The record gives the reactivity of an RNA of 177 nucleotides to DMS and 2A3. Conditions: 150 mM KOAc, 10 mM MgCl2 and 150 mM bicine (pH 8.5), 24 C. For 2A3 the reverse transcriptase was SuperScript II with manganese. Source: RMDB libraries RFM100 and RFMREP, as collected in RNAgym.
RNA sequence: GGGAACGACUCGAGUAGAGUCGAAAAACUUGUCUGAAUCCCUAUGGGGAUUCUUAUAUUUUUGGAGUUUUCAUUAUGGCACUGACCGUAGAACAAAAAGCACAAAUCGUUAAAGAUUUCCAACGCAAACAAUAAGAAUUUUCGAAUUCUUAUUGUUAAAAGAAACAACAACAACAAC
Reactivity to DMS in 0.01 (KOAc 150mM, MgCl2 10mM, bicine 150mM(pH8.5), 24C), signal-to-noise 2, nucleotides 027 to 126: a070c030u000u000g010u000c010u010g000a040a010u000c010c000c000u000a130u040g050g010g010g010a000u000u010c000u020u000a030u010a010u030u000u000u010u010g000g000a230g010u000u000u010u000c050a050u030u000a040u010g020g010c010a110c130u020g010a110c030c020g020u000a030g020a070a090c120a010a110a080a060a050g000c070a070c080a030a040a040u010c030g010u000u050a070a040a130g000a080u010u000u000c040c030a100a070c160g010c170a070
Reactivity to 2A3 in 0.01 (KOAc 150mM, MgCl2 10mM, bicine 150mM(pH8.5), 24C), signal-to-noise 4, nucleotides 027 to 126: a000c050u090u070g080u070c030u020g020a000a000u010c010c010c030u070a210u240g060g000g000g000a000u010u000c000u060u020a080u020a030u030u130u010u050u100g080g030a100g020u040u010u000u050c040a050u030u130a040u090g020g000c040a050c200u120g070a110c050c000g020u040a020g080a060a020c030a020a090a040a040a010g040c040a010c040a050a070a020u050c050g040u130u150a110a070a030g020a070u040u050u040c010c010a080a040c090g040c130a090